[RMDB]
RNA sequence: GGGAACGACUCGAGUAGAGUCGAAAAGUCGCCAACCGCCUACGCCGCCCCGAGCCCGCGGCGCUGGCCGUGCCCGUGGCCGUCGCCGCCUUAGUGCUGCUCGCACGCCUGAGCCGGCGGUCGCGGCGACCAUGGCUGGGUUCGCCCAGCCAUGGUCAAAAGAAACAACAACAACAAC
Reactivity to DMS in 0.01 (KOAc 150mM, MgCl2 10mM, bicine 150mM(pH8.5), 24C), signal-to-noise 1, nucleotides 027 to 126: g000u000c040g050c000c000a150a170c080c060g000c030c030u000a150c110g060c020c020g010c080c020c200c030g000a110g000c000c020c180g000c030g030g000c090g000c070u000g010g000c080c070g000u000g020c190c000c000g000u000g000g010c000c000g000u000c000g000c100c140g000c080c030u050u040a080g000u030g010c000u000g050c070u000c060g000c050a030c120g000c000c040u000g000a080g020c100c010g010g030c030g000g000u020c000g020c060g030g000c100
Reactivity to 2A3 in 0.01 (KOAc 150mM, MgCl2 10mM, bicine 150mM(pH8.5), 24C), signal-to-noise 2, nucleotides 027 to 126: g050u030c010g040c060c010a040a030c030c010g010c010c010u040a040c040g030c020c010g040c010c010c020c060g020a020g020c000c010c030g020c010g010g000c010g000c040u020g010g000c000c020g030u020g040c040c000c000g010u020g000g000c000c010g000u020c000g010c060c010g030c010c000u050u060a030g010u060g110c020u050g010c010u040c060g040c010a030c090g020c000c040u070g010a010g030c000c000g030g000c000g000g020u010c000g000c000g010g000c040
Structure probing data (DMS and 2A3) for a 177-nucleotide construct.
As a SHAPE reagent, 2A3 marks flexible, mostly unpaired nucleotides at the ribose 2'-OH.
The RNA was probed in 150 mM KOAc, 10 mM MgCl2 and 150 mM bicine (pH 8.5) at 24 C.
It was measured as part of the RMDB library OK1LIB.